Structure probing data (DMS and 2A3) for a 207-nucleotide construct. In probing experiments dimethyl sulfate is read out at A N1 and C N3, which are open when not base-paired. For DMS, 1,842 sequencing reads were counted. For 2A3 the reverse transcriptase was SuperScript II with manganese. The reactions ran in a buffer of 150 mM KOAc, 10 mM MgCl2 and 150 mM bicine (pH 8.5), at 24 C. It was measured as part of the RMDB library OK3TST.

RNA sequence: GGGAACGACUCGAGUAGAGUCGAAAACGUUCAAAAAUAUCACCGCAUCGACAACGUUUCACCAGAUCCAGAAAACGAGUCAAUGCCGGACGAAACGCAAUAUGCGCUGGCGUCACUUGAUGGAGAACCGAUCGCCUUUGUUCAUUCUCACACUGGAAUUCCACAGGUAGUUCGCUACCUGUGGAAUAAAAGAAACAACAACAACAAC
Reactivity to DMS in 0.01 (KOAc 150mM, MgCl2 10mM, bicine 150mM(pH8.5), 24C), signal-to-noise 2, nucleotides 027 to 156: c050g030u000u000c030a040a200a040a080a150u030a090u010c020a180c000c050g040c050a060u010c050g060a120c020a150a100c050g020u010u000u020c020a240c120c000a280g000a150u000c110c010a080g010a060a060a100a050c010g020a300g040u000c010a020a010u020g000c060c100g000g000a100c000g030a040a010a020c020g050c010a200a150u030a100u000g040c040g020c020u010g010g040c060g000u000c030a130c080u010u030g000a020u000g030g000a140g050a070a160c050c050g000a090u000c040g000c030c010u000u060u000g000u000u000c120a130u000u000c010u000c050a100c120a210c010u000g000g000a140
Reactivity to 2A3 in 0.01 (KOAc 150mM, MgCl2 10mM, bicine 150mM(pH8.5), 24C), signal-to-noise 4, nucleotides 027 to 156: c030g030u060u050c060a070a010a040a010a000u230a030u120c070a050c030c020g000c010a030u010c020g010a010c010a190a080c050g000u000u020u020c100a120c080c040a100g040a230u130c060c030a020g050a060a050a000a010c020g000a010g000u000c000a000a000u050g020c110c040g020g020a050c040g050a050a040a020c030g010c020a060a150u080a130u300g030c030g000c040u030g110g000c000g030u030c030a050c090u100u120g060a080u120g120g060a050g030a090a070c050c070g020a060u090c040g040c020c000u060u040u040g060u040u040c020a030u040u010c020u010c020a030c000a030c130u110g050g000a080